[RMDB]
RNA sequence: GGGAACGACUCGAGUAGAGUCGAAAAGAUAUGGACCAUCACGCUAGCCUCACAUUCGGAAACGAAUGUUACAGAGGCUUGGACCGUGAAUGGUCCUAAGUCAAAGCUCUCUCGUUCGCGAGAGAGCCAGUAGAAGAUCCUUCGGGAUCUUCUACUGAAAAGAAACAACAACAACAAC
Reactivity to DMS in 0.01 (KOAc 150mM, MgCl2 10mM, bicine 150mM(pH8.5), 24C), signal-to-noise 8, nucleotides 027 to 126: g000a030u000a130u020g010g010a010c000c000a020u000c000a010c010g000c020u010a000g010c000c000u000c000a110c000a010u000u000c000g010g000a050a030a090c000g010a020a010u000g010u000u010a190c300a300g010a010g010g020c000u010u010g010g000a040c300c010g010u000g010a060a040u000g000g010u000c000c000u000a000a070g000u000c020a120a120a200g000c000u000c000u000c000u000c000g030u000u020c260g030c010g000a010g000a020g000a010g010c000
Reactivity to 2A3 in 0.01 (KOAc 150mM, MgCl2 10mM, bicine 150mM(pH8.5), 24C), signal-to-noise 3, nucleotides 027 to 126: g000a010u030a020u080g000g010a000c010c000a010u000c010a010c000g010c020u020a010g010c000c000u020c000a020c000a010u010u000c000g020g020a010a020a010c010g000a010a000u010g010u000u080a050c060a130g040a000g020g000c010u000u050g000g000a000c000c030g000u000g060a210a140u030g000g000u000c000c000u000a010a000g010u010c050a160a060a060g000c000u000c000u000c000u000c010g040u080u100c300g000c010g120a000g000a000g000a000g010c000